[RMDB]
RNA sequence: GGGAACGACUCGAGUAGAGUCGAAAACGUUGUCAUCGACAACACCCUAUGCAUUCAUGCUCUGUAAGGAUGCGCCGAAAGGUGAGCAAGCCCGAGUUGCCCAGACCUGAAGUGCAACACUUUAGAGAAAACCCGAAGCAGUUCGCUGCUUCGGGAACGUUAUUUGUAACUUCGGUUACAAAUAACGAAAAGAAACAACAACAACAAC
Reactivity to DMS in 0.01 (KOAc 150mM, MgCl2 10mM, bicine 150mM(pH8.5), 24C), signal-to-noise 3, nucleotides 027 to 156: c110g030u010u000g010u010c010a200u000c060g000a050c000a050a020c030a100c020c020c010u000a060u000g000c020a040u060u000c070a200u010g030c020u010c040u000g000u020a300a170g030g010a160u000g020c010g000c060c010g010a110a130a120g020g010u010g000a060g010c030a180a260g010c000c060c090g020a220g000u000u000g000c050c020c050a230g000a110c020c000u000g000a040a020g030u010g040c100a040a140c050a120c020u000u000u000a060g000a140g010a070a060a060a140c000c010c000g000a010a010g000c040a080g000u010u000c300g060c020u000g020c000u000u000c000g010g020g000a010a000
Reactivity to 2A3 in 0.01 (KOAc 150mM, MgCl2 10mM, bicine 150mM(pH8.5), 24C), signal-to-noise 4, nucleotides 027 to 156: c090g000u000u010g010u020c090a250u170c300g010a000c010a010a000c010a090c000c000c010u030a050u080g010c010a020u000u020c030a050u180g000c000u000c000u010g040u030a010a000g010g000a000u010g000c000g000c000c000g080a110a020a010g010g010u020g010a020g010c020a020a010g020c010c040c020g140a080g020u030u040g020c000c030c030a040g050a120c010c040u050g030a050a000g010u020g050c060a130a030c020a030c130u080u080u100a090g010a000g010a080a080a040a050c000c000c000g000a000a000g000c000a000g020u050u130c220g050c110u000g000c000u000u000c000g000g000g000a000a000